[RMDB]
RNA sequence: GGGAACGACUCGAGUAGAGUCGAAAACACGGAGCCGUGACGUGCUAGCCAGGCAGCGCGUCGUUCAGGACACGGACCUGAAUUGGCGGAACCGUCGGAGUGUCCGUGACCCACUUCGCGAGUGGACGGAGGUGCGGACGUUCGCGUUCGUACUUCCAAAAGAAACAACAACAACAAC
Reactivity to 2A3 in 0.01 (KOAc 150mM, MgCl2 10mM, bicine 150mM(pH8.5), 24C), signal-to-noise 9, nucleotides 027 to 126: c030a000c010g010g010a010g030c010c000g050u110g010a010c000g010u020g000c010u030a070g060c030c080a060g050g040c020a000g000c010g000c000g000u010c010g010u020u010c010a010g000g020a010c010a010c040g030g050a020c000c000u000g020a020a020u050u150g040g000c000g010g020a040a050c030c000g010u030c030g040g040a120g040u110g060u000c000c000g000u000g020a020c000c000c000a010c010u050u050c040g010c030g030a010g020u030g010g020a030c040
Reactivity to DMS in 0.01 (KOAc 150mM, MgCl2 10mM, bicine 150mM(pH8.5), 24C), signal-to-noise 9, nucleotides 027 to 126: c070a050c030g000g000a140g010c010c010g010u010g010a020c010g010u010g010c010u010a110g000c030c070a080g010g010c100a030g000c000g000c000g010u000c010g010u010u000c040a020g000g000a150c020a030c060g000g000a050c010c000u010g000a040a120u020u040g010g010c000g000g010a060a080c040c010g000u000c090g010g010a100g010u020g000u000c000c000g010u010g010a230c140c010c010a030c040u000u010c080g020c080g000a120g000u010g000g000a160c160
This 177-nucleotide RNA was probed chemically with 2A3 and DMS. Conditions: 150 mM KOAc, 10 mM MgCl2 and 150 mM bicine (pH 8.5), 24 C. For 2A3, 110,904 sequencing reads were counted. Reactivities are given for positions 27 through 126. For DMS, 79,835 sequencing reads were counted. High 2A3 reactivity points to a flexible backbone, as in loops and unpaired stretches. It was measured as part of the RMDB library OK1LIB.